[RMDB]
RNA sequence: GGGAACGACUCGAGUAGAGUCGAAAAGCAAAGACUUUUAAAUUAGUUUUAUGAGGUAAAGCAAAUGAUUAGAGGGCUUGGGAAUGUAAUGUUCUUAACCUAUUCUCAAACUUUAAAUAUGUAAGACAUAUUAGGACCAUUUCGAUGGUCCUAAUAUAAAAGAAACAACAACAACAAC
Reactivity to 2A3 in 0.01 (KOAc 150mM, MgCl2 10mM, bicine 150mM(pH8.5), 24C), signal-to-noise 5, nucleotides 027 to 126: g020c070a050a100a010g070a260c020u010u020u050u140a070a160a160u100u090a070g020u000u000u060u080a040u070g050a030g140g020u100a040a010a010g020c070a110a060a080u080g030a010u030u160a040g030a110g020g030g010c060u040u040g050g010g020a020a000u010g030u250a090a120u230g030u030u030c000u010u030a070a060c000c000u030a060u060u000c010u000c000a060a080a050c010u110u070u100a050a130a080u240a080u060g040u040a060a000g000a030c000
Reactivity to DMS in 0.01 (KOAc 150mM, MgCl2 10mM, bicine 150mM(pH8.5), 24C), signal-to-noise 4, nucleotides 027 to 126: g010c040a110a090a140g010a100c020u000u000u010u010a020a110a110u020u010a100g000u020u000u000u000a010u010g000a100g030g000u000a010a030a020g010c090a070a070a090u010g000a030u000u020a020g010a050g030g000g000c300u000u030g000g000g010a010a000u010g020u020a090a090u060g010u000u000c010u000u010a040a090c020c020u000a040u010u000c020u010c020a030a080a100c030u010u010u020a020a040a060u020a040u010g000u000a010a000g000a020c050